[RMDB]
RNA sequence: GGGAACGACUCGAGUAGAGUCGAAAAAGCUGUUGGCGCGUACUUCAAGACGGGGCAGCUGACGCCGAUUGACCUGAUCGUGGAGGAGCGCUUCCACAGGGCAGCCCCUGGCGGCAUGGGCGGCACCACAGUAUACGGUCUUCGGACCGUAUACUGUAAAAGAAACAACAACAACAAC
Reactivity to 2A3 in 0.01 (KOAc 150mM, MgCl2 10mM, bicine 150mM(pH8.5), 24C), signal-to-noise 1, nucleotides 027 to 126: a020g090c060u060g000u090u100g050g010c070g000c030g040u130a050c060u040u100c040a050a000g050a020c010g010g000g020g040c020a010g000c040u070g020a040c080g060c090c000g090a100u010u130g030a100c000c040u100g060a300u060c040g040u000g000g010a020g020g020a050g060c020g110c050u050u000c030c010a010c010a010g000g020g060c040a020g000c000c000c000c050u040g030g080c030g020g000c010a050u090g000g000g010c000g030g060c000a000c050c000
Reactivity to DMS in 0.01 (KOAc 150mM, MgCl2 10mM, bicine 150mM(pH8.5), 24C), signal-to-noise 3, nucleotides 027 to 126: a060g020c010u000g010u000u000g020g010c300g000c010g020u020a140c050u000u020c110a080a080g000a040c100g010g010g000g010c020a060g020c020u020g000a130c150g020c060c010g000a110u010u000g000a070c030c020u000g000a120u000c100g030u010g000g010a030g010g020a300g010c060g020c010u000u020c070c040a090c080a070g000g000g030c040a060g020c040c000c000c030u020g030g010c100g010g010c070a050u010g000g000g020c040g000g010c070a080c120c050